[RMDB]
RNA sequence: GGGAACGACUCGAGUAGAGUCGAAAAAUUCUGUACAUAAAAGUCGAAAGUAUUGCUAUAGUUAAGGUUGCGCUUGCCUAUUUAGGCAUACUUCUCAGGAUGGCGCGUUGCAGUCCAACAAGAUACAAAAACAACGGCCACUUCGGUGGCCGUUGAACAUCUACUUAUCGUUCGCGAUAAGUAGAUGAAAAGAAACAACAACAACAAC
Reactivity to DMS in 0.01 (KOAc 150mM, MgCl2 10mM, bicine 150mM(pH8.5), 24C), signal-to-noise 2, nucleotides 027 to 156: a070u000u000c040u000g010u000a140c060a130u000a050a100a030a150g000u000c040g000a120a110a120g010u000a030u000u040g000c010u000a100u010a050g020u000u000a050a080g000g000u000u000g040c080g000c060u000u000g000c060c000u010a180u000u010u000a060g050g040c000a030u000a010c050u000u000c070u020c040a130g040g000a070u000g020g020c060g000c080g020u000u000g000c000a130g000u000c010c040a080a130c040a000a060g000a180u000a080c040a050a040a120a100a140c000a010a020c020g090g000c000c040a040c010u010u010c300g050g030u000g040g000c000c020g010u000u000g000a030a050
Reactivity to 2A3 in 0.01 (KOAc 150mM, MgCl2 10mM, bicine 150mM(pH8.5), 24C), signal-to-noise 1, nucleotides 027 to 156: a000u110u010c050u040g070u090a080c030a060u280a160a210a090a040g050u060c040g080a100a040a030g020u020a040u060u190g020c010u070a080u090a200g070u080u070a140a010g030g020u050u080g050c100g000c010u050u080g010c040c000u070a110u090u110u160a060g010g000c010a010u010a010c030u000u040c030u010c100a020g070g040a090u070g030g040c000g000c010g060u000u050g000c010a010g010u000c040c010a030a020c010a010a090g060a070u140a140c080a040a120a000a020a000c010a000a000c000g000g000c000c000a020c020u030u060c210g140g010u000g010g010c000c000g000u000u000g000a000a000

Source information
Chemical mapping of a 207-nucleotide RNA with DMS and 2A3. The RNA was probed in 150 mM KOAc, 10 mM MgCl2 and 150 mM bicine (pH 8.5) at 24 C. Reactivities are given for positions 27 through 156. For 2A3 the reverse transcriptase was SuperScript II with manganese. High DMS reactivity at an A or C suggests that its Watson-Crick edge is free.